The record gives the reactivity of an RNA of 177 nucleotides to 2A3 and DMS. For 2A3 the reverse transcriptase was SuperScript II with manganese. The reactions ran in a buffer of 150 mM KOAc, 10 mM MgCl2 and 150 mM bicine (pH 8.5), at 24 C. For DMS the reverse transcriptase was MarathonRT.
[RMDB]
RNA sequence: GGGAACGACUCGAGUAGAGUCGAAAAGUGUCAAUGGACUUUUCCGUUAAGCGAGGAACGAGUAGGAAAAGGAAACGUUCCCCAAUCGGAACGAAUGGGUAGAGAACGUUUAAUUGACUCGUGUUGAAGGAAGCGUAAGAUUCGUCUUACGCUUCCUAAAAGAAACAACAACAACAAC
Reactivity to 2A3 in 0.01 (KOAc 150mM, MgCl2 10mM, bicine 150mM(pH8.5), 24C), signal-to-noise 4, nucleotides 027 to 126: g060u040g000u000c000a010a040u040g050g020a070c020u000u000u000u020c020c000g080u160u290a100a070g070c070g050a100g050g120a200a150c050g010a030g080u130a070g060g000a000a020a000a000g010g000a030a000a020c000g000u010u000c000c010c000c000a010a010u030c020g160g140a130a130c100g000a030a040u030g020g010g000u040a070g030a030g010a280a000c000g000u020u020u060a060a010u000u000g000a000c000u000c030g060u080g040u050u090g060a040
Reactivity to DMS in 0.01 (KOAc 150mM, MgCl2 10mM, bicine 150mM(pH8.5), 24C), signal-to-noise 3, nucleotides 027 to 126: g000u000g000u010c000a030a000u010g000g030a140c030u000u000u000u000c000c000g000u020u020a120a160g000c040g000a230g040g010a070a090c070g010a100g000u000a300g030g000a020a000a020a020g000g000a020a010a020c000g030u000u000c000c010c000c000a010a040u000c010g000g000a140a190c100g040a010a060u000g000g000g000u060a190g020a200g010a000a020c010g000u000u000u000a060a040u010u000g000a030c000u000c030g000u010g010u010u020g010a140